Conditions: 150 mM KOAc, 10 mM MgCl2 and 150 mM bicine (pH 8.5), 24 C. Chemical mapping of a 177-nucleotide RNA with DMS and 2A3. For DMS the reverse transcriptase was MarathonRT.
[RMDB]
RNA sequence: GGGAACGACUCGAGUAGAGUCGAAAAGUGCCGAUGGCGCAGAAGCCUGAGGCGUAAGCUCGGGUGGAGCCGUCGGUAACGAAUAUCCUGGCGGUAGUAGCAGCAUAGUCGGGUGAGAAUCCCGACCUCAAGUGCAUGUAUUCGUACAUGCACUUGAAAAAGAAACAACAACAACAAC
Reactivity to DMS in 0.01 (KOAc 150mM, MgCl2 10mM, bicine 150mM(pH8.5), 24C), signal-to-noise 7, nucleotides 027 to 126: g010u000g010c010c000g020a020u000g020g020c000g000c150a140g010a150a190g010c000c000u000g000a060g010g020c050g010u060a060a150g010c000u000c010g000g000g010u000g010g000a140g010c010c000g010u000c000g000g000u010a010a000c020g000a160a100u020a110u000c000c000u000g000g000c090g000g020u010a060g000u010a050g000c050a090g010c100a070u010a100g010u000c000g010g000g000u000g000a140g000a240a110u010c000c000c000g000a020c020c230
Reactivity to 2A3 in 0.01 (KOAc 150mM, MgCl2 10mM, bicine 150mM(pH8.5), 24C), signal-to-noise 3, nucleotides 027 to 126: g010u010g010c010c000g000a010u010g010g000c030g080c200a030g020a050a000g000c000c010u050g020a060g050g010c000g000u030a020a020g030c000u000c010g020g010g000u040g000g010a030g010c000c010g010u000c000g000g010u010a070a000c000g000a020a020u040a040u100c010c010u030g070g000c030g010g030u090a040g000u030a010g090c050a010g010c010a040u020a070g010u000c000g000g000g010u000g000a010g000a020a020u020c000c000c000g000a000c000c000
As a SHAPE reagent, 2A3 marks flexible, mostly unpaired nucleotides at the ribose 2'-OH. Reactivities are given for positions 27 through 126. For 2A3 the reverse transcriptase was SuperScript II with manganese.